[RMDB]
RNA sequence: GGGAACGACUCGAGUAGAGUCGAAAAACUGCCAUUCGUGGCAGAAACACGCCUUACCAGGACUAAACAGCGUGUCUAAAAAACAGUCCUUCAUACCUGAUCUGGAGGGUAGAUCAGGAAUACUAAAAAAAUCGGGUGAAGUUCGCUUCACCCGAAAGUAAUGAAACGCGUUCGCGCGUUUCAUUACAAAAGAAACAACAACAACAAC
Reactivity to 2A3 in 0.01 (KOAc 150mM, MgCl2 10mM, bicine 150mM(pH8.5), 24C), signal-to-noise 2, nucleotides 027 to 156: a000c000u000g000c000c000a010u020u030c190g030u030g000g000c010a010g020a000a010a010c000a000c010g000c000c000u000u030a000c040c040a040g000g000a000c010u060a120a040a020c010a010g000c020g000u010g040u090c150u040a000a010a010a010a000a000c020a000g010u000c030c050u000u080c070a100u100a180c010c000u010g000a000u000c010u020g060g080a100g130g040g040u070a000g000a010u020c010a000g000g060a000a000u080a030c070u140a020a000a040a040a000a070a120u070c000g020g020g010u010g000a000a010g010u040u150c230g010c040u000u000c000a000c000c000c000g000a000a000a000